[RMDB]
RNA sequence: GGGAACGACUCGAGUAGAGUCGAAAAGACGCCUUCAGAAGAAGAGGCUAGGGGGUAUUCCGGUGUGGGAUACUUAGUAAUAUGCAACGCUAAUUGCAUAAGAUUGUAGGACGGAAUUUACAGUCUUUAGAGAUAAGCACGUUCGCGUGCUUAUCAAGUCUUUAGUAACCUUCGGGUUACUAAAGACAAAAGAAACAACAACAACAAC
Reactivity to 2A3 in 0.01 (KOAc 150mM, MgCl2 10mM, bicine 150mM(pH8.5), 24C), signal-to-noise 4, nucleotides 027 to 156: g090a020c040g020c020c000u040u050c060a150g040a280a050g030a100a010g010a100g010g020c020u020a050g020g000g000g010g030u030a020u050u020c050c000g090g100u200g050u150g080g000g010a010u010a030c010u020u050a040g020u060a050a090u010a020u110g000c010a020a020c050g000c210u130a080a110u090u020g000c010a020u010a040a030g020a050u010u070g020u040a010g000g080a010c060g050g050a050a070u070u090u050a080c010a010g010u000c000u030u060u070a100g040a000g000a050u000a000a000g010c000a000c000g010u030u060c140g020c010g080u000g000c000u000u000a000u000c000a000a010
Reactivity to DMS in 0.01 (KOAc 150mM, MgCl2 10mM, bicine 150mM(pH8.5), 24C), signal-to-noise 1, nucleotides 027 to 156: g000a090c050g020c000c020u010u010c010a120g010a220a160g000a060a080g000a070g000g020c030u000a100g020g010g020g030g040u000a040u000u020c020c020g040g060u000g050u010g010g020g010a060u000a030c050u000u000a040g040u000a070a130u010a020u000g000c010a070a050c030g060c230u010a070a060u000u000g020c000a060u000a040a070g000a050u000u000g000u000a030g020g010a200c020g010g010a090a250u000u010u010a060c030a080g020u000c000u000u000u010a120g010a200g010a000u000a000a030g000c010a010c000g030u010u010c300g030c020g030u000g000c000u000u000a000u000c000a020a100